RNA sequence: GGGAACGACUCGAGUAGAGUCGAAAAGAUAUGGAGUCAUGAAGCUUUUGACGCCCAGUCGGAAACGACUGGAGCGAUAAGCUUAUGACUCCUAAGUCAAAGUGAUUGGCGUUCGCGCCAAUCACAAUCAUGUUUAUAUGUUCGCAUAUAAACAUGAAAAAGAAACAACAACAACAAC
Reactivity to 2A3 in 0.01 (KOAc 150mM, MgCl2 10mM, bicine 150mM(pH8.5), 24C), signal-to-noise 6, nucleotides 027 to 126: g000a000u020a000u050g000g000a010g000u010c010a000u090g300a040a020g000c020u110u260u300u300g080a020c000g000c000c000c000a000g000u000c000g000g010a020a010a000c000g000a000c000u010g020g070a030g000c000g000a010u090a280a030g000c000u000u000a000u000g000a000c000u000c000c000u000a000a000g000u000c020a070a060a080g000u010g000a000u000u000g010g000c030g050u060u080c300g000c020g000c100c000a000a010u000c000a000c000a000a030
Reactivity to DMS in 0.01 (KOAc 150mM, MgCl2 10mM, bicine 150mM(pH8.5), 24C), signal-to-noise 6, nucleotides 027 to 126: g000a010u000a070u010g000g010a020g010u000c000a000u000g000a020a010g020c000u000u010u010u020g010a180c180g000c010c000c000a010g010u000c000g020g000a020a020a040c000g010a010c010u000g000g010a030g030c000g020a040u010a030a030g020c000u000u000a010u000g000a010c000u000c000c000u000a000a040g010u000c010a100a110a170g020u000g000a010u000u000g000g000c000g020u000u010c230g020c010g020c000c000a000a000u000c000a000c000a050a090

An RNA of 177 nucleotides, treated with 2A3 and DMS and read out base by base. Source: RMDB library TTRDEL, as collected in RNAgym. For 2A3, 28,261 sequencing reads were counted. Reactivities are given for positions 27 through 126. 2A3 adducts were read by reverse transcription with SuperScript II with manganese. Conditions: 150 mM KOAc, 10 mM MgCl2 and 150 mM bicine (pH 8.5), 24 C. 2A3 is a SHAPE reagent: it acylates the 2'-hydroxyl of flexible nucleotides of all four kinds.